[RMDB]
RNA sequence: GGGAACGACUCGAGUAGAGUCGAAAAGCUGACUCGGUAAUGACCGGUGAUUGUUUGUGCGGGCUGGUGCGCCUGAUGGAAGCCAACCCGAACGCCGGGAUCAUUCAGUCGUCGCCGAAAGCGUCCAAAUACGGACGAUAUUCGUAUCGUCCGUAUUAAAAGAAACAACAACAACAAC
Reactivity to 2A3 in 0.01 (KOAc 150mM, MgCl2 10mM, bicine 150mM(pH8.5), 24C), signal-to-noise 4, nucleotides 027 to 126: g000c010u020g050a080c020u010c030g000g000u040a040a010u030g010a020c010c010g010g050u010g020a040u020u100g220u300u060u120g060u060g000c000g000g000g000c000u000g000g020u060g060c210g090c040c020u200g210a210u300g020g010a020a010g010c000c000a000a010c000c000c010g020a120a010c040g020c030c020g060g040g000a000u010c010a010u280u150c020a010g010u020c020g020u040c020g000c020c000g000a030a030a000g010c000g010u010c000c020a000
Reactivity to DMS in 0.01 (KOAc 150mM, MgCl2 10mM, bicine 150mM(pH8.5), 24C), signal-to-noise 5, nucleotides 027 to 126: g000c010u000g010a150c160u000c010g000g020u000a050a030u010g010a030c000c040g000g010u000g000a040u000u000g010u010u010u000g030u000g010c000g010g010g020c040u000g010g010u000g010c300g010c010c010u000g020a110u010g020g010a090a300g000c010c010a010a030c000c000c010g010a040a060c060g020c190c200g010g000g000a030u000c000a020u000u000c040a030g000u000c010g020u000c060g010c010c000g000a010a050a030g020c000g010u000c010c020a080
This 177-nucleotide RNA was probed chemically with 2A3 and DMS.
The DMS profile rests on 7,502 reads.
For 2A3 the reverse transcriptase was SuperScript II with manganese.
It was measured as part of the RMDB library OK2TRN.